[RMDB]
RNA sequence: GGGAACGACUCGAGUAGAGUCGAAAAGAUAUGGAUAGUACUGAUACUUAUCGGAAACGAUAAAUAUCAUCAGGUAUCAUCCUAAGUCAAACCAUGUGGAACCAGGUUCGCCUGGUUCCACAUGGAACGAUCAAGGGUUGUUCGCAACCCUUGAUCGAAAAGAAACAACAACAACAAC
Reactivity to 2A3 in 0.01 (KOAc 150mM, MgCl2 10mM, bicine 150mM(pH8.5), 24C), signal-to-noise 1, nucleotides 027 to 126: g030a040u110a050u150g000g010a030u040a040g020u060a020c060u240g000a000u010a070c020u040u000a000u000c020g040g000a090a060a030c030g000a000u010a030a040a010u150a090u080c090a020u120c060a010g160g030u060a050u160c040a030u020c030c020u090a270a060g070u020c050a070a010a040c000c000a010u010g000u020g030g000a000a010c020c000a000g000g050u060u120c260g070c050c000u000g000g000u000u000c000c000a000c000a000u000g010g000a010a010
Reactivity to DMS in 0.01 (KOAc 150mM, MgCl2 10mM, bicine 150mM(pH8.5), 24C), signal-to-noise 1, nucleotides 027 to 126: g000a030u010a300u000g000g000a080u010a020g000u000a000c000u020g000a010u010a000c030u000u000a000u000c000g020g010a100a070a160c000g000a000u010a000a000a000u010a020u000c020a160u040c300a110g000g010u000a010u000c050a010u000c000c010u050a080a170g000u000c050a100a090a220c000c000a010u010g010u000g010g010a000a000c010c000a000g040g000u010u040c220g010c000c000u000g020g000u000u000c000c000a000c000a000u000g000g000a030a040
Structure probing data (2A3 and DMS) for a 177-nucleotide construct. The RNA was probed in 150 mM KOAc, 10 mM MgCl2 and 150 mM bicine (pH 8.5) at 24 C. Source: RMDB library TTRDEL, as collected in RNAgym. For 2A3, 1,589 sequencing reads were counted. 2A3 adducts were read by reverse transcription with SuperScript II with manganese.